[RMDB]
RNA sequence: GGGAACGACUCGAGUAGAGUCGAAAAGUUGACGCCAACGACUUCCGGCCGGACACCUACGUCACGCACCCGGACUACCGCACGCAGCUGUUCAACGACACGAACCUGUCCUACGCGAACCGCGCGGGGACGAACGAGGUGCUUCGGAACCGCGAGGCUGGUUCAGUGUAUUCGUACACUGAACCAGAAAAGAAACAACAACAACAAC
Reactivity to 2A3 in 0.01 (KOAc 150mM, MgCl2 10mM, bicine 150mM(pH8.5), 24C), signal-to-noise 4, nucleotides 027 to 156: g050u050u060g050a090c100g100c070c020a110a050c030g070a030c040u060u000c010c000g020g000c010c000g000g000a000c010a010c000c030u200a170c020g020u020c060a030c130g030c010a100c010c010c000g020g040a050c060u170a110c040c020g050c010a040c020g020c020a050g010c050u080g030u060u030c020a100a010c100g240a070c060a030c160g030a040a030c000c020u060g050u190c020c030u140a100c140g000c020g050a050a050c030c050g020c000g020c010g040g000g060g020a020c020g000a000a010c020g020a040g010g050u030g010c110u000u000c000g070g030a130a120c010c000g040c110g020a010g010g050
Reactivity to DMS in 0.01 (KOAc 150mM, MgCl2 10mM, bicine 150mM(pH8.5), 24C), signal-to-noise 1, nucleotides 027 to 156: g050u010u000g010a220c060g010c080c010a090a130c090g040a060c040u010u010c110c010g020g000c160c060g000g000a140c030a080c050c010u010a050c030g020u030c040a100c000g010c000a260c050c000c060g030g000a070c060u000a080c060c010g000c010a040c300g020c040a150g000c000u030g040u000u010c020a080a160c040g030a100c200a130c050g010a010a050c020c000u000g020u000c060c040u000a040c010g000c070g010a110a280c060c040g040c030g040c030g040g060g010g010a100c000g010a010a030c000g020a120g000g080u000g020c090u020u000c060g030g030a110a130c040c000g000c090g010a060g040g010

Annotation
Conditions: 150 mM KOAc, 10 mM MgCl2 and 150 mM bicine (pH 8.5), 24 C. Chemical mapping of a 207-nucleotide RNA with 2A3 and DMS. Source: RMDB library OK3TST, as collected in RNAgym.